Chemical mapping of a 207-nucleotide RNA with 2A3. Conditions: 150 mM KOAc, 10 mM MgCl2 and 150 mM bicine (pH 8.5), 24 C. Source: RMDB library M2RFPK, as collected in RNAgym. For 2A3, 765 sequencing reads were counted.
RNA sequence: GGGAACGACUCGAGUAGAGUCGAAAAACGCGGAGUACGCUCCGCGACAACACUUCUUUCGACCCGCUAACCGAGACCUAUGGGUCGUUAAAUUACGUCUCUAUCUUACUCACAUACCAUCGCACAAAAAACGUGGUUCGGUUCGCCGAACCACGAAGUUCCUUGAAAGCUUCGGCUUUCAAGGAACAAAAGAAACAACAACAACAAC
Reactivity to 2A3 in 0.01 (KOAc 150mM, MgCl2 10mM, bicine 150mM(pH8.5), 24C), signal-to-noise 2, nucleotides 027 to 156: a000c040g000c000g000g000a000g030u070a010c140g050c100u000c030c010g030c010g000a010c010a080a010c060a030c030u080u060c090u030u240u100c000g000a000c000c010c000g060c190u190a020a020c020c060g000a000g050a010c000c000u050a080u280g000g000g010u000c000g010u010u040a020a100a100u130u050a020c000g000u000c000u000c000u000a070u120c020u020u090a100c000u030c190a100c000a120u120a100c010c030a110u110c070g040c110a060c170a090a050a000a030a050a050c040g010u000g060g000u000u000c000g040g000u020u010c190g050c050c010g000a000a000c000c000a000c000g000a000a000